[RMDB]
RNA sequence: GGGAACGACUCGAGUAGAGUCGAAAAAGCGGUAUAAUGGACGAGUGGGGGAACGAUCCGGACAUCCACCACCAGUGUAUCGCCAUCGUUAUCCGUGGACGGUCCCUGUCCACCCCACAUGAUCCAGUGUGCGUAUAACGUUCGCGUUAUACGCACAAAAAGAAACAACAACAACAAC
Reactivity to 2A3 in 0.01 (KOAc 150mM, MgCl2 10mM, bicine 150mM(pH8.5), 24C), signal-to-noise 1, nucleotides 027 to 126: a000g050c020g010g020u080a070u010a140a090u060g050g070a160c040g030a050g060u020g000g010g000g000g030a000a030c020g010a040u080c120c050g030g000a010c000a030u000c000c030a030c020c010a030c030c010a020g030u010g010u120a030u060c070g000c000c020a040u050c040g040u040u070a060u070c070c110g030u020g010g000a020c040g000g000u000c000c010c000u000g030u000c000c010a120c020c000c000c000a030c020a060u230g010a120u050c020c010a030g020
Reactivity to DMS in 0.01 (KOAc 150mM, MgCl2 10mM, bicine 150mM(pH8.5), 24C), signal-to-noise 2, nucleotides 027 to 126: a100g010c050g010g030u010a030u010a090a120u000g010g000a060c060g010a190g040u010g010g000g010g000g010a050a090c050g010a080u000c160c090g020g010a130c090a070u000c020c050a080c000c050a080c080c050a070g000u000g000u000a030u000c030g010c020c030a020u000c140g060u000u000a060u010c130c180g020u000g000g000a020c050g010g000u000c010c010c010u000g020u000c010c010a190c000c000c000c000a060c080a040u010g010a070u000c040c040a080g010

This 177-nucleotide RNA was probed chemically with 2A3 and DMS. For 2A3 the reverse transcriptase was SuperScript II with manganese. It was measured as part of the RMDB library OK2TST. For 2A3, 1,679 sequencing reads were counted. DMS adducts were read by reverse transcription with MarathonRT. The DMS profile rests on 1,878 reads.